RNA sequence: GGGAACGACUCGAGUAGAGUCGAAAACUGAGCUAUAUGAUCAAACACAAAUUCCUUACCCCGCCGAAAGUCUACGAUGCCACUAUAGCCGAGUAUGACUUUUCGCAACUGCCCGGCUAUCAAAACGUCACCUACUGGGAUUCGUCCCAGUAGGUGAAAAAGAAACAACAACAACAAC
Reactivity to DMS in 0.01 (KOAc 150mM, MgCl2 10mM, bicine 150mM(pH8.5), 24C), signal-to-noise 1, nucleotides 027 to 126: c120u040g000a110g020c050u020a070u030a040u000g000a070u000c060a060a080a090c150a060c090a110a050a170u000u000c000c000u010u020a250c020c050c030c070g000c080c040g000a020a080a050g000u000c000u000a110c100g000a220u000g020c010c070a040c120u000a060u010a020g000c000c000g050a180g000u000a020u010g020a080c030u000u000u000u020c120g000c100a100a090c070u000g000c000c020c030g010g080c000u000a030u020c130a080a000a020a080c210g000
Reactivity to 2A3 in 0.01 (KOAc 150mM, MgCl2 10mM, bicine 150mM(pH8.5), 24C), signal-to-noise 1, nucleotides 027 to 126: c000u010g010a000g060c040u060a060u060a100u300g030a050u110c040a020a170a020c030a020c060a040a060a200u060u060c000c000u010u110a090c000c000c000c070g060c000c000g020a060a040a040g000u020c000u050a020c030g070a000u050g020c050c050a110c060u060a070u060a220g000c000c000g000a010g010u010a050u160g050a060c090u060u060u030u070c030g000c060a110a070c020u020g000c020c000c010g020g000c000u020a010u110c090a000a090a060a060c030g000